RNA sequence: GGGAACGACUCGAGUAGAGUCGAAAACGCUGGGCUCGGACCCUCUCCCAUAAGGGAGCUGAAGCGCGCACGGCGAAGAACUUAUGUGGAGAGCCGAGCCUGUGCUGAAGCGCGCACGGCAACCGAAAGGUGCGACUACUCCUCUUCGGAGGAGUAAAGUUCGAUAUUUGUUCGCAAAUAUCGAACUAAAAGAAACAACAACAACAAC
Reactivity to DMS in 0.01 (KOAc 150mM, MgCl2 10mM, bicine 150mM(pH8.5), 24C), signal-to-noise 1, nucleotides 027 to 156: c070g000c100u000g000g010g050c000u000c010g030g020a290c130c300c000u000c010u030c010c000c000a040u010a000a030g020g010g000a030g060c000u010g020a010a070g070c020g030c000g010c040a300c020g020g070c000g020a200a230g000a190a270c040u000u000a000u010g040u010g100g000a070g010a110g070c000c020g000a040g040c000c000u000g040u000g000c010u000g000a150a090g000c000g000c010g080c000a220c050g020g060c000a080a300c000c000g000a180a100a250g090g010u000g010c010g010a180c010u020a040c000u000c020c000u000c030u000u010c300g040g020a070g040g000a020g000u000a000a000
Reactivity to 2A3 in 0.01 (KOAc 150mM, MgCl2 10mM, bicine 150mM(pH8.5), 24C), signal-to-noise 2, nucleotides 027 to 156: c030g000c030u060g000g010g010c000u000c000g040g020a060c120c140c000u000c000u000c000c000c000a000u000a000a000g020g030g000a010g000c010u040g060a260a060g000c000g000c000g000c000a010c010g010g000c010g100a190a030g000a010a000c000u000u000a000u000g210u300g040g000a030g020a010g050c000c000g000a010g000c010c030u000g000u000g000c020u060g010a140a050g000c000g020c000g000c010a000c010g050g000c050a070a040c030c000g110a110a030a010g020g030u060g020c010g010a000c020u060a020c000u010c000c000u000c020u060u070c300g150g000a000g000g020a000g000u000a020a070